[RMDB]
RNA sequence: GGGAACGACUCGAGUAGAGUCGAAAACGUUAAAGAAGUCUAUGCAACCUUUAGAUGCAGACGAUUAUUCGUAUGCAAUGGCUGCCUAAUUAGCAAAAGUUAAUUAACCAGCCAUCGCUCUUCAGCGGAGGCGCUUACUCCAAGGCUGUUAGAGUGGCUUGCUAAAAAGGUUCGCCUUUUUAGCAAGAAAAGAAACAACAACAACAAC
Reactivity to DMS in 0.01 (KOAc 150mM, MgCl2 10mM, bicine 150mM(pH8.5), 24C), signal-to-noise 2, nucleotides 027 to 156: c060g000u010u010a100a060a080g000a080a100g000u010c040u000a110u010g040c020a040a080c010c020u020u000u000a060g010a100u000g030c010a020g020a030c020g000a070u000u000a120u010u000c010g010u010a090u000g010c100a020a030u000g010g000c000u000g030c140c020u000a010a030u000u010a010g030c000a040a140a120a260g020u010u000a020a000u000u000a020a050c000c010a030g030c010c010a020u010c000g000c000u000c230u000u000c060a080g010c000g000g000a200g020g010c110g000c090u010u000a030c040u000c000c010a060a270g010g020c010u000g050u010u010a050g000a050g030u000g020g010
Reactivity to 2A3 in 0.01 (KOAc 150mM, MgCl2 10mM, bicine 150mM(pH8.5), 24C), signal-to-noise 3, nucleotides 027 to 156: c020g020u090u120a060a000a120g100a110a020g010u000c080u140a110u120g040c020a080a100c050c000u100u200u170a100g040a110u080g000c000a000g010a010c020g010a010u070u090a150u150u110c060g020u050a030u080g030c030a080a030u020g000g000c000u010g000c010c010u010a020a000u010u010a000g000c030a110a190a300a020g010u010u010a000a000u010u000a020a020c030c000a000g000c000c000a010u020c010g000c000u000c060u030u010c000a000g010c000g070g000a000g060g030c100g030c270u080u160a100c000u030c010c000a030a020g160g000c010u020g080u160u040a020g000a000g000u030g030g000